[RMDB]
RNA sequence: GGGAACGACUCGAGUAGAGUCGAAAAAGCGGAAUGGCCGUGCUGGAAGGUCCACCGCCAGCGCCGGCUCACCCAGGCCGACGAUCACGGUGUCCCAGGUAUGGGCGUUCUGUCCGCCGCCGUGCAGGGGUGCUCCAGAGUUCGCUCUGGAGCACCCAAAAGAAACAACAACAACAAC
Reactivity to 2A3 in 0.01 (KOAc 150mM, MgCl2 10mM, bicine 150mM(pH8.5), 24C), signal-to-noise 1, nucleotides 027 to 126: a000g090c100g040g000a150a230u010g060g050c000c000g030u040g000c040u000g040g020a050a070g070g000u070c000c000a000c000c010g000c000c000a040g000c010g070c000c040g020g020c030u110c060a180c010c000c000a020g050g000c130c000g050a060c030g070a130u100c120a010c010g030g040u020g010u030c000c000c120a000g130g020u040a110u120g000g000g000c010g000u180u160c060u090g120u040c030c000g000c000c040g050c010c000g150u070g070c020a010g000
Structure probing data (2A3) for a 177-nucleotide construct. Source: RMDB library OK1LIB, as collected in RNAgym. 2A3 adducts were read by reverse transcription with SuperScript II with manganese. For 2A3, 404 sequencing reads were counted.